[RMDB]
RNA sequence: GGGAACGACUCGAGUAGAGUCGAAAACAUGGUGAAAUUAUCACUACCAUGGUACCUAGUGAUAAUUUCAGGUACAGGCUAUAGGUACGGUGGACAUGCGAAAGCAUGUCCAUCGUACUUAUAGCCAGCAGGUAGUAGGGUUCGCCCUACUACCUGCAAAAGAAACAACAACAACAAC
Reactivity to DMS in 0.01 (KOAc 150mM, MgCl2 10mM, bicine 150mM(pH8.5), 24C), signal-to-noise 1, nucleotides 027 to 126: c070a080u020g000g000u010g000a000a000a000u000u000a010u000c000a010c000u000a030c090c070a130u000g050g010u010a070c070c040u010a000g020u010g000a010u000a000a010u000u000u000c000a010g000g020u010a140c170a110g020g000c000u010a000u000a000g000g010u000a000c010g020g000u000g010g000a000c000a010u000g000c000g020a120a130a200g000c000a000u010g020u000c000c000a000u000c000g010u000a000c000u000u000a000u000a000g000c000c000a000